The record gives the reactivity of an RNA of 177 nucleotides to DMS and 2A3. Values cover nucleotides 27 to 126. For 2A3 the reverse transcriptase was SuperScript II with manganese. DMS adducts were read by reverse transcription with MarathonRT. The reactions ran in a buffer of 150 mM KOAc, 10 mM MgCl2 and 150 mM bicine (pH 8.5), at 24 C. It was measured as part of the RMDB library RFM100.
RNA sequence: GGGAACGACUCGAGUAGAGUCGAAAAACCCCGGGGCACGAGGCCUCCACUGCGGCUGCGCCGCCUGCCGGCGCGCGUCCGACUUCUACUGCGGCUGCGCACGGUCGGCGCGCACACGCUCUUCUGCACGACAUGGACAGUUCGCUGUCCAUGUCGUAAAAGAAACAACAACAACAAC
Reactivity to DMS in 0.01 (KOAc 150mM, MgCl2 10mM, bicine 150mM(pH8.5), 24C), signal-to-noise 1, nucleotides 027 to 126: a120c030c000c000c300g000g000g000g120c000a170c270g050a140g060g000c000c000u000c000c100a050c170u000g150c000g000g000c300u000g000c000g000c060c060g070c000c010u000g000c010c010g000g000c170g000c050g060c060g000u110c000c000g050a020c000u000u000c080u000a100c250u050g000c020g000g000c000u000g000c000g000c000a050c090g020g000u010c300g000g000c060g020c020g000c000a140c130a280c130g040c000u000c160u000u020c000u000g000c300
Reactivity to 2A3 in 0.01 (KOAc 150mM, MgCl2 10mM, bicine 150mM(pH8.5), 24C), signal-to-noise 2, nucleotides 027 to 126: a000c030c000c000c000g020g000g000g010c040a030c190g170a070g200g000c000c010u060c020c020a140c080u140g000c000g020g060c070u030g030c010g030c020c020g000c010c000u010g000c000c000g000g000c090g000c000g000c000g040u070c000c000g100a230c030u150u090c070u210a130c100u210g020c000g020g020c010u060g050c010g000c030a010c070g000g000u000c000g020g000c010g000c000g010c000a010c030a000c000g000c030u080c040u060u000c010u020g020c050